[RMDB]
RNA sequence: GGGAACGACUCGAGUAGAGUCGAAAAAAUUAGAGGCAAUUUGAAAUAAUUUAACUUAGCUCAACCCUACUGCACUUACCGAACUAGAUAACGGUGUAGUAGGGGUAAAUUCUCCGCAUUCGGUGCGCAACCACCUGAGGUUUCGACCUCAGGUGAAUGACUACGUAUAGUUCGCUAUACGUAGUCAAAAAGAAACAACAACAACAAC
Reactivity to DMS in 0.01 (KOAc 150mM, MgCl2 10mM, bicine 150mM(pH8.5), 24C), signal-to-noise 1, nucleotides 027 to 156: a090a050u020u010a050g000a140g000g010c100a080a070u000u000u000g010a120a180a120u000a100a070u010u000u000a080a050c050u000u000a130g040c020u010c040a050a080c020c020c010u020a000c000u010g010c000a000c010u000u010a050c040c000g000a060a160c200u010a120g000a110u000a040a030c110g000g030u000g040u010a020g030u000a010g010g010g000g010u010a010a020a160u000u000c010u000c050c040g000c100a210u000u000c060g000g000u000g000c040g020c070a100a110c070c010a040c000c010u010g000a040g010g000u000u010u010c230g010a080c000c000u000c000a040g020g010u000g010a000a000
Reactivity to 2A3 in 0.01 (KOAc 150mM, MgCl2 10mM, bicine 150mM(pH8.5), 24C), signal-to-noise 3, nucleotides 027 to 156: a000a010u160u090a080g000a050g010g010c020a040a050u040u070u150g130a160a090a140u290a110a070u110u150u130a070a040c050u050u140a050g030c000u010c000a010a000c000c000c000u000a000c000u000g040c000a000c000u040u030a010c030c060g080a100a070c040u060a060g040a130u100a180a040c090g010g000u000g010u000a000g000u010a000g000g000g010g000u000a000a000a010u040u000c010u000c020c030g000c010a020u030u040c060g060g010u020g000c040g020c030a060a080c040c010a000c000c000u000g000a000g030g050u020u030u180c180g080a070c000c000u000c000a000g000g000u000g000a000a010

This 207-nucleotide RNA was probed chemically with DMS and 2A3. For DMS, 2,394 sequencing reads were counted. For DMS the reverse transcriptase was MarathonRT. For 2A3, 1,731 sequencing reads were counted.